[RMDB]
RNA sequence: GGGAACGACUCGAGUAGAGUCGAAAAUAGUAUAUGCAGUUUUCUUAAAAUUGCAGGGAAUGACUAAAAGCCCACGUUUUUCCCACUUUUAGUAGUACUGAAGCGUAGAUAGAUUGAACGUUGCUGGUAUCUCGAAAACAUUCGUGUUUUCGAGAUAAAAAGAAACAACAACAACAAC
Reactivity to DMS in 0.01 (KOAc 150mM, MgCl2 10mM, bicine 150mM(pH8.5), 24C), signal-to-noise 2, nucleotides 027 to 126: u030a010g010u010a040u040a070u000g000c010a020g010u000u000u010u010c160u010u000a050a030a010a010u010u000g000c000a010g020g000g030a070a030u010g020a040c060u020a040a040a110a150g000c070c050c010a110c070g000u000u000u000u010u000c000c000c040a190c170u050u010u000u030a030g010u000a090g020u000a170c020u010g000a060a030g020c040g000u000a020g000a120u020a070g000a120u000u000g010a030a040c060g000u000u010g050c010u000g010g020
Reactivity to 2A3 in 0.01 (KOAc 150mM, MgCl2 10mM, bicine 150mM(pH8.5), 24C), signal-to-noise 1, nucleotides 027 to 126: u050a000g090u050a040u000a020u190g000c010a000g000u000u000u000u090c040u020u110a010a010a010a010u000u000g000c000a000g030g000g000a000a100u030g030a140c000u080a200a100a000a000g030c000c020c000a040c000g000u020u010u020u020u020c000c040c000a020c000u020u070u100u260a040g000u000a010g030u020a040c080u040g050a020a020g020c020g040u080a010g010a090u040a000g090a140u040u160g030a010a000c020g000u040u010g000c000u000g050g000
Annotation:
An RNA of 177 nucleotides, treated with DMS and 2A3 and read out base by base. The 2A3 profile rests on 464 reads. 2A3 is a SHAPE reagent: it acylates the 2'-hydroxyl of flexible nucleotides of all four kinds. It was measured as part of the RMDB libraries RFM100 and RFMREP. The RNA was probed in 150 mM KOAc, 10 mM MgCl2 and 150 mM bicine (pH 8.5) at 24 C.